[RMDB]
RNA sequence: GGGAACGACUCGAGUAGAGUCGAAAACCGUAUCGGUUCGCCGAUACGGAAAAGUUAAUGCUGCUAACACACAUCUUAAGCAUGGCGGUGGUAUCGCUGGUCGGACUCCCCAGUUCGCUGGGGAGAAUUACAUAAGAAACUUCGGUUUCUUAUGUAAAAAAGAAACAACAACAACAAC
Reactivity to DMS in 0.01 (KOAc 150mM, MgCl2 10mM, bicine 150mM(pH8.5), 24C), signal-to-noise 8, nucleotides 027 to 126: c010c000g000u000a000u000c000g010g010u000u010c230g020c010c000g000a010u000a000c000g000g000a010a030a050a110g000u000u010a070a070u000g010c030u000g000c060u000a070a100c100a070c080a080c080a050u010c070u000u000a090a090g010c060a050u000g000g010c050g010g010u000g000g010u010a040u000c050g010c020u000g020g010u000c040g010g000a180c010u000c000c010c000c000a020g010u000u010c180g010c000u000g000g000g000g010a000g010a010a050
Reactivity to 2A3 in 0.01 (KOAc 150mM, MgCl2 10mM, bicine 150mM(pH8.5), 24C), signal-to-noise 5, nucleotides 027 to 126: c000c000g000u010a010u000c010g010g040u050u050c130g030c050c000g000a000u000a000c000g000g000a050a080a000a000g050u060u100a100a060u130g010c020u010g010c010u070a130a010c040a000c010a010c010a160u060c040u110u110a070a030g040c040a060u070g020g010c030g010g060u070g030g090u060a030u100c020g000c020u040g040g010u080c030g010g040a050c000u010c010c000c000c000a000g020u040u060c140g010c070u000g000g000g000g000a000g000a000a000